[RMDB]
Record summary:
Source: RMDB library M2PK50, as collected in RNAgym. An RNA of 177 nucleotides, treated with DMS and 2A3 and read out base by base. For 2A3, 1,537 sequencing reads were counted. For DMS the reverse transcriptase was MarathonRT.
RNA sequence: GGGAACGACUCGAGUAGAGUCGAAAACGACAGCUUUUCGAAGCUGUCGAUUGGCAAAGGCUAGGACCGGCCAGACAAAGCUCCGAUAGCAAAUCGUAACGAAGCUCGCCUGCUUCGGCAGGCGAAACAUUUGUUAGCCAUUCGUGGCUAACAAAUGAAAAGAAACAACAACAACAAC
Reactivity to DMS in 0.01 (KOAc 150mM, MgCl2 10mM, bicine 150mM(pH8.5), 24C), signal-to-noise 3, nucleotides 027 to 126: c020g010a000c000a020g010c000u000u000u000u000c120g020a030a010g010c000u010g000u000c000g000a030u000u000g000g000c040a070a070a150g020g000c030u010a100g010g010a140c040c020g000g000c000c020a060g020a090c140a070a130a150g010c020u010c010c000g000a060u010a080g010c060a050a070a080u010c130g010u010a090a120c110g010a070a060g000c120u000c020g020c000c010u000g010c010u000u010c140g020g000c000a010g010g020c000g010a000a030a100
Reactivity to 2A3 in 0.01 (KOAc 150mM, MgCl2 10mM, bicine 150mM(pH8.5), 24C), signal-to-noise 1, nucleotides 027 to 126: c000g010a000c000a010g010c020u070u040u070u070c140g120a030a000g000c000u000g010u000c010g000a040u020u050g010g010c030a060a230a190g000g000c020u160a060g040g170a060c000c000g000g020c030c000a010g020a050c090a040a050a010g020c000u000c060c030g040a020u070a030g100c020a000a040a180u120c110g020u070a100a090c080g060a070a010g020c030u010c010g000c000c000u000g000c000u030u030c060g040g000c000a010g050g160c010g000a000a000a000